[RMDB]
RNA sequence: GGGAACGACUCGAGUAGAGUCGAAAAGGGAGCGACUUGGCUUCGACAGGAGUAAGUCUGCUUAGAUGGCAUGUCGCUUUGGGCAAAGCGUAAAAAGCCCAAAUAAAAUUAAACGCAAACAACGUUAAAUUCGCUCCUGCUUACGCUAAAGCUGCGUCAACUACGUUAUCUUCGGAUAACGUAGUUGAAAAGAAACAACAACAACAAC
Reactivity to 2A3 in 0.01 (KOAc 150mM, MgCl2 10mM, bicine 150mM(pH8.5), 24C), signal-to-noise 6, nucleotides 027 to 156: g030g010g000a010g000c020g020a020c010u040u050g050g110c000u010u010c010g060a080c050a030g010g070a030g060u180a150a040g080u110c030u040g030c010u080u020a060g010a070u100g020g020c010a020u050g040u060c010g000c030u010u010u020g010g000g000c080a130a170a030g010c010g090u140a020a030a020a050a000g010c010c030c010a010a060a010u100a010a020a000a010u090u120a060a050a000c040g010c060a140a110a060c050a070a040c050g010u060u070a070a070a060u110u060c030g020c030u000c000c000u020g000c020u020u020a020c040g000c030u070a110a060a040g040c070u060g030c010g050u010
Reactivity to DMS in 0.01 (KOAc 150mM, MgCl2 10mM, bicine 150mM(pH8.5), 24C), signal-to-noise 1, nucleotides 027 to 156: g000g000g030a010g010c000g010a020c030u000u000g020g010c010u040u010c020g020a060c110a010g000g020a160g030u010a070a150g010u010c000u000g000c050u000u000a160g030a100u010g000g030c000a030u000g010u000c020g030c140u030u020u000g060g040g020c000a110a190a070g040c010g010u000a020a010a060a100a170g000c000c000c010a030a050a050u000a050a020a050a070u000u000a120a000a030c050g000c030a080a180a130c090a080a060c010g000u020u000a070a060a130u010u000c010g020c000u010c010c030u000g010c080u040u000a040c040g030c010u020a060a090a120g030c030u010g020c030g040u000